[RMDB]
RNA sequence: GGGAACGACUCGAGUAGAGUCGAAAAAGGUGAAAGCCCUGUAGACGAAAUCCAGAGUGGGAAUUAGUGGUAUCCUGAGUAAUACAUCACACGUGGAACGAUGUAUGAACCCGCGCGGACCACCGCGGGAUGGUAUUAUAUUCGUAUAAUACCAUCCAAAAGAAACAACAACAACAAC
Reactivity to DMS in 0.01 (KOAc 150mM, MgCl2 10mM, bicine 150mM(pH8.5), 24C), signal-to-noise 9, nucleotides 027 to 126: a050g010g010u000g000a100a100a160g010c030c010c010u000g010u010a080g010a080c050g000a070a100a100u010c030c040a100g010a110g010u010g000g000g010a080a080u010u010a080g010u000g000g010u010a080u010c020c010u000g000a080g010u000a100a020u000a010c010a010u000c010a130c150a130c170g020u020g010g010a100a130c160g000a010u000g000u000a010u000g000a080a140c050c010c020g010c040g010c060g000g000a100c090c200a040c020c020g010c040g010
Reactivity to 2A3 in 0.01 (KOAc 150mM, MgCl2 10mM, bicine 150mM(pH8.5), 24C), signal-to-noise 9, nucleotides 027 to 126: a000g060g000u070g040a100a040a040g060c010c000c010u020g040u040a080g030a060c060g040a060a040a040u040c030c020a020g050a040g140u120g010g040g030a060a100u100u040a100g030u030g050g020u050a070u070c010c010u020g010a020g020u050a020a020u010a020c010a010u010c010a020c030a030c170g120u190g070g040a130a060c080g000a020u010g000u010a010u020g020a020a030c000c010c010g020c000g000c010g020g020a030c020c010a090c020c010g010c000g010
Chemical mapping of a 177-nucleotide RNA with DMS and 2A3. For DMS the reverse transcriptase was MarathonRT. For 2A3 the reverse transcriptase was SuperScript II with manganese. Reactivities are given for positions 27 through 126. High 2A3 reactivity points to a flexible backbone, as in loops and unpaired stretches.